[RMDB]
RNA sequence: GGGAACGACUCGAGUAGAGUCGAAAAGGGCCGGGUGCAUCCCUCGUGGUGCUACGAAUGCCUCCAGCUGGCCUCUGCUGGAGAAGCCUACUGUAUAUCUCCUGAUAUACAGUAGAUACCUGCAAGGGAGAGUUGUUCACUUCGGUGAACAGCUUUCAAAAGAAACAACAACAACAAC
Reactivity to 2A3 in 0.01 (KOAc 150mM, MgCl2 10mM, bicine 150mM(pH8.5), 24C), signal-to-noise 9, nucleotides 027 to 126: g040g010g010c030c020g020g020g040u070g010c010a040u040c010c010c010u050c040g100u180g020g010u030g010c030u050a050c050g080a100a050u120g030c000c000u000c000c000a000g000c000u050g030g030c000c020u060c020u030g000c000u000g000g000a010g010a020a010g010c000c000u000a000c000u000g010u010a000u000a000u010c080u100c130c170u210g000a000u000a000u000a000c000a000g000u000a000g000a000u010a030c010c020u030g040c050a070a060g070g040
Reactivity to DMS in 0.01 (KOAc 150mM, MgCl2 10mM, bicine 150mM(pH8.5), 24C), signal-to-noise 9, nucleotides 027 to 126: g000g000g010c030c030g010g010g020u010g000c060a090u010c020c020c080u020c160g010u030g000g020u010g010c030u020a080c120g010a110a100u030g010c040c010u000c010c010a020g000c000u020g010g010c040c040u010c050u000g000c000u000g000g000a030g010a080a100g010c110c010u000a010c000u000g000u000a000u000a000u000c000u040c220c250u030g000a010u000a000u000a000c000a000g000u000a000g000a090u010a040c050c010u000g010c090a120a120g010g000

Conditions: 150 mM KOAc, 10 mM MgCl2 and 150 mM bicine (pH 8.5), 24 C. The record gives the reactivity of an RNA of 177 nucleotides to 2A3 and DMS. For 2A3 the reverse transcriptase was SuperScript II with manganese. The DMS profile rests on 69,860 reads. DMS adducts were read by reverse transcription with MarathonRT. It was measured as part of the RMDB library OK1LIB.